[RMDB]
RNA sequence: GGGAACGACUCGAGUAGAGUCGAAAAGAGGCGGCGCGGCAGCAGCGACAGGCGUCGAGUGGAGGAGGCGGCGGCAGCAGCGGCCCGGGGGUGGCGGCGCAACGACACGCAGUGGCGAGCGCAAGUGAACAGGGUACCUGUUCGCAGGUACCCUGUUAAAAGAAACAACAACAACAAC
Reactivity to 2A3 in 0.01 (KOAc 150mM, MgCl2 10mM, bicine 150mM(pH8.5), 24C), signal-to-noise 2, nucleotides 027 to 126: g100a040g000g010c010g000g000c000g000c030g040g090c020a060g000c010a000g010c040g040a030c030a060g090g100c050g020u030c000g010a030g040u080g010g080a060g030g000a060g020g000c060g000g000c000g030g010c010a030g000c000a010g010c060g030g070c000c020c010g040g000g000g000g050u060g020g000c070g010g000c010g000c040a090a070c030g060a010c000a000c050g120c030a010g050u050g040g010c000g050a020g000c000g000c020a060a070g150u120g130
Reactivity to DMS in 0.01 (KOAc 150mM, MgCl2 10mM, bicine 150mM(pH8.5), 24C), signal-to-noise 2, nucleotides 027 to 126: g010a150g020g030c020g010g020c050g000c070g000g000c020a090g000c080a140g020c030g010a120c100a110g030g000c030g020u020c040g000a110g010u050g000g020a130g030g010a100g000g020c040g000g010c020g010g000c070a080g000c160a050g000c050g000g000c000c050c100g000g000g000g020g040u000g000g000c090g000g000c050g000c020a070a070c120g000a070c060a020c030g020c100a080g030u000g000g020c060g000a110g000c060g000c050a030a070g020u000g010